An RNA of 177 nucleotides, treated with 2A3 and DMS and read out base by base. Values cover nucleotides 27 to 126. For 2A3 the reverse transcriptase was SuperScript II with manganese. Conditions: 150 mM KOAc, 10 mM MgCl2 and 150 mM bicine (pH 8.5), 24 C. It was measured as part of the RMDB library TTRINS.

RNA sequence: GGGAACGACUCGAGUAGAGUCGAAAAGAUAUGGAAGGAUGGAGUUGCUCAUGUCGAAGAACUGGUAGCUUUCGGAAACGAAAGCUACCAGGGAGACAUGAAGCAACUGCGAAGUCCUUCCUAAGUCCGAAAAAUAGAAGUUCGCUUCUAUUUUUCGAAAAGAAACAACAACAACAAC
Reactivity to 2A3 in 0.01 (KOAc 150mM, MgCl2 10mM, bicine 150mM(pH8.5), 24C), signal-to-noise 1, nucleotides 027 to 126: g010a050u160a010u200g000g030a020a010g000g010a010u230g030g260a070g010u000u030g000c000u020c000a010u020g010u030c060g220a300a100g000a140a060c010u000g040g000u010a000g050c010u050u000u000c020g000g030a150a050a030c010g000a000a000a000g000c000u010a000c030c010a000g010g000g000a020g020a000c000a000u010g030a020a030g000c000a000a000c000u020g000c000g050a050a020g040u000c000c000u000u000c000c000u010a050a010g020u000c050
Reactivity to DMS in 0.01 (KOAc 150mM, MgCl2 10mM, bicine 150mM(pH8.5), 24C), signal-to-noise 3, nucleotides 027 to 126: g010a160u000a300u020g000g000a030a030g000g010a010u000g010g010a040g000u000u000g010c000u000c010a010u000g010u000c000g020a150a240g000a170a230c000u000g010g010u000a010g010c000u000u000u000c020g000g010a130a060a300c000g000a010a000a010g010c000u000a010c000c000a000g000g010g010a130g010a000c000a000u000g000a070a020g030c000a020a010c010u000g020c120g010a160a290g000u000c000c000u000u000c000c000u000a020a090g000u000c080